RNA sequence: GGGAACGACUCGAGUAGAGUCGAAAAGGCUGAUGUAGUGACAAACCAUUUCUCAGCAGUAAUUAGUGAUUUCGUAAAAUAAUACUUUCAGGUACACAACGCGCUUAAGCAAAUUAAGCAAUCCCUAUCUUCCAUUCUACUUCGGUAGAAUGGAAGAAAAAGAAACAACAACAACAAC
Reactivity to 2A3 in 0.01 (KOAc 150mM, MgCl2 10mM, bicine 150mM(pH8.5), 24C), signal-to-noise 5, nucleotides 027 to 126: g110g000c010u010g000a060u220g050u060a020g040u000g050a060c100a040a120a040c050c020a020u040u080u020c000u000c000a020g000c000a000g050u070a030a120u120u130a050g060u020g110a120u060u090u110c110g060u090a040a070a010a050u140a030a070u050a100c010u050u110u140c060a050g000g060u060a040c030a000c000a060a120c050g030c000g000c030u010u040a010a020g040c030a060a080a300u060u040a010a030g000c000a000a050u000c010c000c000u020a050
Reactivity to DMS in 0.01 (KOAc 150mM, MgCl2 10mM, bicine 150mM(pH8.5), 24C), signal-to-noise 3, nucleotides 027 to 126: g000g010c030u000g000a040u020g000u010a090g020u000g000a130c190a080a110a180c110c020a080u000u020u030c040u000c000a040g000c050a100g020u010a010a060u010u000a120g000u000g010a120u020u010u020c100g000u070a060a030a110a060u000a070a070u000a050c060u000u000u030c010a090g000g000u000a050c050a020c070a030a070c150g020c090g040c010u010u000a010a080g010c150a050a070a050u020u000a020a050g000c040a090a090u010c000c000c010u010a250